[RMDB]
RNA sequence: GGGAACGACUCGAGUAGAGUCGAAAACUACGACGCUGUGUUCGUGUGGAGAAUUUUAGGUAGAUUUAUGCACACUUGGGUCUAUCGAGUGGCUGAUAAUUCAGGAUUUUUGCACUCGUAAAAAUCCCGCAGUAAAUCCGUUCGCGGAUUUACUGCGAAAAGAAACAACAACAACAAC
Reactivity to DMS in 0.01 (KOAc 150mM, MgCl2 10mM, bicine 150mM(pH8.5), 24C), signal-to-noise 1, nucleotides 027 to 126: c040u000a060c030g000a040c070g060c190u040g010u040g040u060u030c030g010u010g070u000g000g030a120g020a030a090u030u080u000u070a090g040g000u030a160g020a040u040u020u000a030u010g000c000a040c100a020c040u000u010g000g000g010u020c050u010a090u080c000g010a020g050u030g010g010c010u000g000a030u040a010a040u040u040c060a090g000g010a070u000u000u000u000u000g000c000a140c170u000c170g020u040a000a020a110a040a010u000c000c000
Reactivity to 2A3 in 0.01 (KOAc 150mM, MgCl2 10mM, bicine 150mM(pH8.5), 24C), signal-to-noise 2, nucleotides 027 to 126: c030u060a010c000g000a010c050g000c150u110g060u080g040u290u000c020g010u040g060u150g070g030a150g030a100a100u080u140u160u160a270g010g100u040a010g050a090u040u050u050a220u170g060c050a020c000a000c290u030u070g050g000g120u100c020u110a130u230c020g010a020g020u040g000g080c010u020g060a060u030a230a060u040u100c060a000g040g000a020u010u000u020u010u030g030c050a050c150u050c170g000u020a010a010a010a010a010u020c050c000
This 177-nucleotide RNA was probed chemically with DMS and 2A3. DMS adducts were read by reverse transcription with MarathonRT. The 2A3 profile rests on 682 reads. 2A3 adducts were read by reverse transcription with SuperScript II with manganese. The RNA was probed in 150 mM KOAc, 10 mM MgCl2 and 150 mM bicine (pH 8.5) at 24 C.